[RMDB]
Structure probing data (2A3 and DMS) for a 177-nucleotide construct. DMS adducts were read by reverse transcription with MarathonRT. For 2A3 the reverse transcriptase was SuperScript II with manganese. In probing experiments dimethyl sulfate is read out at A N1 and C N3, which are open when not base-paired. The DMS profile rests on 1,481 reads. Source: RMDB library RFM100, as collected in RNAgym.

RNA sequence: GGGAACGACUCGAGUAGAGUCGAAAAUCAGACAGUUAGCGGGCUGCGGGUUGCAGUCCUUACCGGUAGAUAGGAUCUUCUCUGGAGAGUAAUGCCCAGGCUGCUUCCCUGAUAAUUGCGCUGUGUUUGAACAGUAAUGCUUCGGCAUUACUGUUCAAAAAGAAACAACAACAACAAC
Reactivity to 2A3 in 0.01 (KOAc 150mM, MgCl2 10mM, bicine 150mM(pH8.5), 24C), signal-to-noise 2, nucleotides 027 to 126: u100c000a010g060a100c000a000g020u000u040a060g070c030g000g070g050c080u080g000c020g040g040g060u140u030g000c000a000g000u010c010c010u000u000a000c000c020g040g020u040a050g040a180u100a030g050g050a160u110c010u050u030c060u000c010u100g060g000a010g000a000g140u200a100a040u110g000c030c000c000a000g130g000c030u020g010c000u040u050c000c000c000u060g040a020u050a180a060u080u110g030c010g000c020u000g010u070g000u070u000
Reactivity to DMS in 0.01 (KOAc 150mM, MgCl2 10mM, bicine 150mM(pH8.5), 24C), signal-to-noise 1, nucleotides 027 to 126: u000c040a100g030a070c090a090g020u000u000a090g040c120g000g010g000c000u030g010c090g020g030g030u050u000g020c000a000g000u010c000c020u000u000a050c090c150g010g000u010a010g000a210u000a090g000g050a100u020c020u000u000c050u000c060u020g020g000a300g000a150g000u010a030a090u110g000c000c000c030a110g000g010c020u000g050c010u020u000c000c000c030u000g000a170u000a000a080u010u080g000c010g030c000u000g000u000g000u000u000